[RMDB]
RNA sequence: GGGAACGACUCGAGUAGAGUCGAAAACUUCACCACAGUUAGUUGUUGCUUAUGCAUUAGCUGGAACGGUUGAUAUUGAUUUACAGAAUGAACCUAUUGGUAAAGGUAAUGACGGUGAAGAUGUAUACCGGUUAACAUUAUUCGUAAUGUUAACCGGAAAAGAAACAACAACAACAAC
Reactivity to 2A3 in 0.01 (KOAc 150mM, MgCl2 10mM, bicine 150mM(pH8.5), 24C), signal-to-noise 2, nucleotides 027 to 126: c030u020u030c020a050c090c010a060c040a050g050u050u100a010g030u010u070g030u020u020g000c040u080u120a060u270g000c010a050u050u000a010g000c000u030g000g030a050a010c030g030g100u040u040g030a050u020a090u210u130g150a200u130u050u180a040c050a010g140a130a100u070g030a000a090c000c010u090a170u130u240g070g000u150a160a110a020g000g030u050a040a010u030g020a020c050g000g000u000g030a010a010g030a010u070g110u020a100u030a110
Reactivity to DMS in 0.01 (KOAc 150mM, MgCl2 10mM, bicine 150mM(pH8.5), 24C), signal-to-noise 5, nucleotides 027 to 126: c050u000u000c020a040c010c010a170c220a130g020u000u000a060g010u010u010g010u000u010g010c040u000u010a100u010g010c030a040u000u000a060g000c020u000g010g020a130a100c100g000g010u000u000g010a080u010a070u000u000g000a190u000u000u000a080c060a040g010a070a060u000g010a050a070c090c020u010a180u010u000g010g010u000a060a100a050g000g010u010a040a030u000g010a100c110g020g000u000g000a040a030g010a080u000g020u000a080u010a170
Structure probing data (2A3 and DMS) for a 177-nucleotide construct. For 2A3 the reverse transcriptase was SuperScript II with manganese. The DMS profile rests on 4,826 reads.